[RMDB]
RNA sequence: GGGAACGACUCGAGUAGAGUCGAAAACAGUGAGACUUCGGUCUCACUGAAAUGACUAUGCACCAUGACGAGGACGAAGAUGCGCAGGACGACGAGGAACAAAAACAGCAAGGUUCGCCUUGCUGAACAGAUUGGACUCGUUCGCGAGUCCAAUCUGAAAAGAAACAACAACAACAAC
Reactivity to DMS in 0.01 (KOAc 150mM, MgCl2 10mM, bicine 150mM(pH8.5), 24C), signal-to-noise 1, nucleotides 027 to 126: c000a000g010u000g000a060g000a000c000u000u010c170g000g010u000c000u000c010a010c000u010g000a010a060a110u030g010a070c020u000a100u000g030c090a080c030c030a090u000g000a070c070g000a030g010g000a050c100g000a130a040g000a050u020g030c010g030c050a030g000g000a040c040g010a070c060g010a180g000g000a040a090c110a080a020a100a060a150c000a000g000c000a010a000g000g010u000u030c160g010c000c000u010u020g010c000u010g000a020a090
An RNA of 177 nucleotides, treated with DMS and read out base by base.
The RNA was probed in 150 mM KOAc, 10 mM MgCl2 and 150 mM bicine (pH 8.5) at 24 C.
In probing experiments dimethyl sulfate is read out at A N1 and C N3, which are open when not base-paired.